[RMDB]
The data come from the RNA Mapping Database (RMDB), library OK3TST. The record gives the reactivity of an RNA of 207 nucleotides to 2A3.

RNA sequence: GGGAACGACUCGAGUAGAGUCGAAAAGUUGUUACGCAAAGGGAUAACGUAACCUGACUCUCCCUCGGACUGUAAUAACCCUGUGGUCUGGUCUACGCCAACUUUCAGCAUACUAUCUCCGCCUGAGAUGCCUACGAGAUUUCCCCUCGUGGUCAUACUGGGGAAACAUUUUCGAAUGUUUCCCCAGAAAAGAAACAACAACAACAAC
Reactivity to 2A3 in 0.01 (KOAc 150mM, MgCl2 10mM, bicine 150mM(pH8.5), 24C), signal-to-noise 1, nucleotides 027 to 156: g120u120u120g010u010u020a020c060g030c080a100a010a110g090g000g070a120u090a250a010c000g000u000a030a030c020c050u020g040a010c020u030c010u040c100c030c010u020c020g030g000a070c010u080g090u140a100a130u040a140a150c040c000c000u050g040u030g040g020u000c030u000g020g000u030c070u070a050c060g010c050c000a090a080c030u000u120u130c040a000g000c010a040u060a110c000u080a060u050c000u030c040c050g150c010c010u060g030a120g060a060u000g000c000c000u000a010c030g020a010g010a050u100u050u010c010c030c000c000u000c000g000u000g010g000u000c000a010u000a070
The reactions ran in a buffer of 150 mM KOAc, 10 mM MgCl2 and 150 mM bicine (pH 8.5), at 24 C.